[RMDB]
RNA sequence: GGGAACGACUCGAGUAGAGUCGAAAAGAUAUGGAUCGUGACCUAAUCAGUCAAAGGGAGCUCGCCAUAUUCGGAAACGAAUAUGCGAGCGAAGAACUUUGAGCUGAUUAGGUCACGAUCCUAAGUCCGAUCAAAGUUUGUUCGCAAACUUUGAUCGAAAAGAAACAACAACAACAAC
Reactivity to DMS in 0.01 (KOAc 150mM, MgCl2 10mM, bicine 150mM(pH8.5), 24C), signal-to-noise 1, nucleotides 027 to 126: g010a120u000a300u000g010g010a000u010c010g050u010g000a000c000c000u000a000a010u010c020a020g000u000c000a000a000a040g010g000g000a150g050c010u000c030g080c290c140a030u010a000u000u000c000g000g000a130a120a220c000g000a010a000u000a000u000g020c000g010a010g010c000g000a020a090g020a120a220c000u010u020u000g000a080g000c040u010g000a000u000u000a000g010g010u000c000a000c000g000a000u000c000c010u000a010a050g010u010c050
The record gives the reactivity of an RNA of 177 nucleotides to DMS. It was measured as part of the RMDB library TTRINS. Reactivities are rounded to 0.1 and cut off at 0 and 3. The DMS profile rests on 1,390 reads. The RNA was probed in 150 mM KOAc, 10 mM MgCl2 and 150 mM bicine (pH 8.5) at 24 C.